The record gives the reactivity of an RNA of 177 nucleotides to 2A3 and DMS. For DMS, 1,397 sequencing reads were counted. The data come from the RNA Mapping Database (RMDB), library TTRDES. The 2A3 profile rests on 2,799 reads.

RNA sequence: GGGAACGACUCGAGUAGAGUCGAAAAAAGAUAUGGAAGGAUGAAGAGUCCUUGGAUUUAUACAGUGUUGACGGAUCGGAAACGAUCCGAUGGCUGUAUUGUCAGGACUCCAUCCUUCCUAAGUCAAGUAAGUACCUCUGUUCGCAGAGGUACUUACAAAAGAAACAACAACAACAAC
Reactivity to 2A3 in 0.01 (KOAc 150mM, MgCl2 10mM, bicine 150mM(pH8.5), 24C), signal-to-noise 2, nucleotides 027 to 126: a020a000g060a050u070a040u170g000g010a020a010g000g000a010u010g110a190a300g040a030g010u000c000c000u010u050g050g010a030u220u300u010a000u010a020c000a040g030u040g090u300u300g300a140c000g010g000a010u000c000g020g000a060a090a090c020g000a010u090c010c010g000a010u010g070g000c000u000g020u020a030u030u000g020u010c010a000g000g000a000c000u000c000c000a000u000c000c000u000u010c000c000u020a000a000g020u010c010a000a210
Reactivity to DMS in 0.01 (KOAc 150mM, MgCl2 10mM, bicine 150mM(pH8.5), 24C), signal-to-noise 2, nucleotides 027 to 126: a140a070g000a030u000a300u000g000g010a020a000g010g000a000u000g030a250a120g000a000g020u000c010c000u000u000g030g000a010u000u000u000a010u000a010c010a020g030u000g010u030u000g000a210c240g010g000a020u000c000g000g010a130a070a300c040g000a010u030c000c010g000a020u000g010g000c000u000g000u010a000u000u000g000u010c040a020g010g000a030c010u000c010c000a000u000c000c000u000u000c000c010u010a020a040g020u010c050a080a160